Source information
This 207-nucleotide RNA was probed chemically with 2A3 and DMS. Values cover nucleotides 27 to 156. For 2A3, 3,696 sequencing reads were counted. DMS adducts were read by reverse transcription with MarathonRT. Conditions: 150 mM KOAc, 10 mM MgCl2 and 150 mM bicine (pH 8.5), 24 C.

[RMDB]
RNA sequence: GGGAACGACUCGAGUAGAGUCGAAAAGAGCAAAUUCGUUUGCUCAAAAAGCGUACUACGAUUGCUAUAAUCGUCGAACUACGAUAAGGGUCCCAAAUAGGACCUGAUGUCGCGACGGUAGCAAUCGUAUCGCAAAAAAGCAGGGUUCGCCCUGCAACGUAGUACUGACUUUCGAGUCAGUACUACGAAAAGAAACAACAACAACAAC
Reactivity to 2A3 in 0.01 (KOAc 150mM, MgCl2 10mM, bicine 150mM(pH8.5), 24C), signal-to-noise 5, nucleotides 027 to 156: g020a000g000c010a010a010a030u100u160c300g110u070u010u000g000c020u000c040a090a050a010a020a010g040c060g060u110a110c080u000a000c040g000a010u000u000g000c000u010a020u060a200a190u140c000g020u000c000g020a080a080c090u130a040c300g000a000u010a020a020g020g000g020u010c030c030c040a100a280a210u300a080g000g000a000c070c010u020g030a050u300g000u000c000g000c010g020a000c000g020g000u000a000g000c000a000a000u000c000g000u000a000u000c000g000c000a040a000a000a110a030a030g000c000a000g030g000g000u090u130c200g170c030c000c000u010g010c000a000a010
Reactivity to DMS in 0.01 (KOAc 150mM, MgCl2 10mM, bicine 150mM(pH8.5), 24C), signal-to-noise 2, nucleotides 027 to 156: g020a030g050c010a020a020a050u000u000c250g060u000u010u000g010c030u020c010a050a030a080a130a190g000c000g000u000a090c130u000a000c000g020a010u000u000g000c000u020a060u000a130a150u010c000g030u030c010g010a120a300c070u000a110c000g010a020u030a180a300g020g000g030u000c000c000c050a020a130a220u040a060g000g010a020c000c000u050g030a060u010g000u010c000g030c010g010a010c000g070g000u000a000g030c000a020a010u010c010g000u000a000u000c000g000c010a000a020a060a100a160a080g010c010a010g010g000g010u000u010c050g050c000c010c010u000g010c020a010a040

Source: RMDB library RNAMAK, as collected in RNAgym.